[RMDB]
RNA sequence: GGGAACGACUCGAGUAGAGUCGAAAAGGUGAUCUGGACGGGAAGUAGGUCCAGCGACUGCUUCCGAAGCUUUGAUAAGAGCAACUCCAUCUACGUUGCUCAAGUAGGUGGUAGCAGCAAACACCGACCUACGUAUAAUGUUCGCAUUAUACGUAGGAAAAGAAACAACAACAACAAC
Reactivity to 2A3 in 0.01 (KOAc 150mM, MgCl2 10mM, bicine 150mM(pH8.5), 24C), signal-to-noise 9, nucleotides 027 to 126: g010g000u020g010a120u050c010u030g000g020a010c020g090g040g110a130a070g150u270a080g110g050u010c000c020a000g000c010g060a150c000u000g000c000u030u000c000c010g040a080a010g010c020u070u080u130g160a180u200a220a130g000a000g000c010a020a010c010u060c070c030a160u050c060u100a050c090g050u050u080g030c020u020c040a020a010g020u030a020g020g120u160g030g000u030a000g000c000a000g000c010a060a040a010c000a000c000c000g020a050
Reactivity to DMS in 0.01 (KOAc 150mM, MgCl2 10mM, bicine 150mM(pH8.5), 24C), signal-to-noise 9, nucleotides 027 to 126: g010g010u000g000a120u020c010u010g000g000a060c020g000g010g020a110a120g020u010a070g010g010u000c010c010a010g000c300g010a160c000u000g000c010u000u000c000c010g010a300a240g000c010u000u020u010g010a150u060a110a130g000a010g000c000a020a030c010u020c220c140a130u060c160u020a070c140g010u000u000g000c020u000c030a020a020g010u000a010g000g020u020g000g010u010a010g000c000a020g000c090a100a090a120c010a010c000c010g010a200